[RMDB]
Structure probing data (DMS and 2A3) for a 177-nucleotide construct. For 2A3, 21,086 sequencing reads were counted. Conditions: 150 mM KOAc, 10 mM MgCl2 and 150 mM bicine (pH 8.5), 24 C. The data come from the RNA Mapping Database (RMDB), library OK2TST. DMS adducts were read by reverse transcription with MarathonRT.
RNA sequence: GGGAACGACUCGAGUAGAGUCGAAAACAGCAGUGGGCCGCCAUCCCGGCCGACCAGCAGCGCGCCUUCAAGGCCCUGCUGCAGAUCAGGGAGGAGGUCAACAUGGUGCUGGAGAGGGCGCGGCAGGCGCCCAACGGAUGUUCGCAUCCGUUGGGCGAAAAGAAACAACAACAACAAC
Reactivity to DMS in 0.01 (KOAc 150mM, MgCl2 10mM, bicine 150mM(pH8.5), 24C), signal-to-noise 9, nucleotides 027 to 126: c050a040g010c040a090g020u000g010g010g010c010c010g000c030c020a120u000c020c020c000g010g020c080c040g010a100c300c010a030g000c010a010g000c170g020c240g020c000c000u000u010c240a130a150g020g000c000c010c000u000g010c010u000g010c060a170g000a050u000c020a100g010g000g010a110g000g000a040g010g010u000c010a050a050c060a100u010g010g020u000g010c010u000g010g000a130g000a100g010g000g010c030g020c050g010g020c050a040g000g010
Reactivity to 2A3 in 0.01 (KOAc 150mM, MgCl2 10mM, bicine 150mM(pH8.5), 24C), signal-to-noise 7, nucleotides 027 to 126: c020a010g060c010a030g040u050g020g020g000c010c010g010c040c010a270u020c010c010c000g030g010c020c010g020a060c030c010a000g000c000a010g040c030g020c030g020c070c020u240u300c140a140a090g030g000c000c000c000u010g000c000u020g000c010a020g010a100u080c080a080g000g000g030a030g000g020a020g000g020u040c040a000a010c020a040u130g120g010u080g020c020u020g020g020a050g030a010g030g010g030c040g000c010g030g030c030a020g050g040